[RMDB]
RNA sequence: GGGAACGACUCGAGUAGAGUCGAAAACCUUGAAAUACGACCCUUUGAUUAUCUGGUACCUAACCCUAACGGGAACAUUGCGUGGUGGGUAGUUUGACUGGGGUGGUCGCCUCCAAAAGAGUAACGGGAUGUUGUCAAGGUUCGCCUUGACAACAUCAAAAGAAACAACAACAACAAC
Reactivity to DMS in 0.01 (KOAc 150mM, MgCl2 10mM, bicine 150mM(pH8.5), 24C), signal-to-noise 3, nucleotides 027 to 126: c000c020u020u020g010a120a080a120u040a060c070g000a070c030c020c020u000u000u020g000a080u010u000a060u000c000u000g000g000u010a060c010c010u000a110a120c010c000c000u010a120a100c210g000g010g010a070a070c170a100u010u000g010c090g030u010g010g010u000g010g000g020u030a020g000u000u020u020g000a040c100u000g020g010g000g020u020g000g000u010c030g030c030c000u000c010c000a030a050a120a130g010a120g010u020a070a100c080g000g000
Reactivity to 2A3 in 0.01 (KOAc 150mM, MgCl2 10mM, bicine 150mM(pH8.5), 24C), signal-to-noise 4, nucleotides 027 to 126: c000c000u000u120g140a050a020a000u180a030c030g050a070c030c000c000u020u020u140g100a070u040u070a030u020c010u030g070g070u060a050c010c010u010a010a060c000c000c000u040a060a010c090g050g000g050a080a050c040a120u120u090g040c020g040u120g100g080u020g020g040g020u050a030g040u030u100u120g060a060c020u000g010g000g000g000u000g010g010u050c020g040c030c000u000c020c000a040a050a050a020g100a000g060u060a090a030c030g090g020